[RMDB]
RNA sequence: GGGAACGACUCGAGUAGAGUCGAAAAAACCCUCCAUGCACAGCUGGGGUUCAAGAAAAUCUUAUGUUACCCCCUAAUGGAUGUUAAUGAGGAUCUUAACCGAUAUCUCUGGCGGGCAGAGUGCCGAAAGGCCGAAUGAUUUCGAUCAUUCGGCCUUAAAAGAAACAACAACAACAAC
Reactivity to DMS in 0.01 (KOAc 150mM, MgCl2 10mM, bicine 150mM(pH8.5), 24C), signal-to-noise 1, nucleotides 027 to 126: a040a040c010c000c000u000c090c000a060u000g000c120a060c170a060g000c220u000g020g030g010g020u010u010c080a020a040g000a240a060a130a150u030c060u010u020a070u000g000u020u020a080c010c000c000c020c140u000a090a010u030g000g000a060u010g010u000u000a080a100u010g000a050g010g000a060u000c020u000u020a090a030c210c120g000a060u000a050u020c010u010c000u000g020g020c060g000g000g030c030a040g000a060g030u000g020c060c100g000a070